[RMDB]
RNA sequence: GGGAACGACUCGAGUAGAGUCGAAAACUCAAGGUAGGGAAUAACAUUGAAUUGAUACAAAUACCUUUUUCGGUGUAGGGAAAAACACCGAAUUGAUACAAAUACCUUUCUCAAUGUAGGGAAUAACAAAACAGGCAUCGCUUCGGCGAUGCCUGAACGUACUCUACAACUUCGGUUGUAGAGUACGAAAAGAAACAACAACAACAAC
Reactivity to 2A3 in 0.01 (KOAc 150mM, MgCl2 10mM, bicine 150mM(pH8.5), 24C), signal-to-noise 2, nucleotides 027 to 156: c000u010c030a000a000g030g020u060a010g000g030g090a070a030u140a090a030c010a010u040u090g030a140a100u140u140g020a110u170a250c090a070a200a060u220a030c000c030u010u000u000u000u000c010g000g000u010g010u020a050g040g000g170a090a190a010a000a000c000a000c040c000g000a000a000u020u020g000a000u010a080c030a000a100a000u060a070c000c010u010u020u010c040u010c000a050a030u040g020u060a050g000g000g150a020a040u080a160a000c060a050a070a000a000c000a000g000g010c000a000u000c000g010c000u040u050c140g120g000c000g000a000u000g000c000c000u000g000a000a000